Annotation: An RNA of 207 nucleotides, treated with 2A3 and read out base by base. The 2A3 profile rests on 604 reads. The RNA was probed in 150 mM KOAc, 10 mM MgCl2 and 150 mM bicine (pH 8.5) at 24 C. Source: RMDB library OK3TST, as collected in RNAgym.
RNA sequence: GGGAACGACUCGAGUAGAGUCGAAAAAGCAUCGUCCUGGUCCCACCGUCCUCGGACGCCAGGCAAGAAUAGUUUCCUCUAUCAGAAGCGCUAACGUUGGCCAGCAGCAGGAGGCAUGUCUGACCGCCGUGCCCGCCGAAGCACCGAGGCCGCGGCCGCCGACUAAAGAGUUCGCUCUUUAGUCGGCAAAAGAAACAACAACAACAAC
Reactivity to 2A3 in 0.01 (KOAc 150mM, MgCl2 10mM, bicine 150mM(pH8.5), 24C), signal-to-noise 1, nucleotides 027 to 156: a000g080c050a030u100c020g110u130c000c000u010g000g010u050c040c000c000a090c030c010g040u080c030c090u080c120g020g010a000c000g020c000c000a000g010g000c020a030a030g140a080a030u070a110g040u090u030u000c030c050u060c030u070a070u180c100a060g090a200a030g020c040g100c220u120a170a180c080g070u140u270g010g000c030c010a020g060c020a000g000c000a010g090g050a030g000g000c010a030u020g020u000c010u100g080a010c020c020g030c000c000g000u000g000c000c000c010g130c020c010g080a160a000g000c030a020c080c050g030a090g000g000c000c000g000c030g030g010c000c030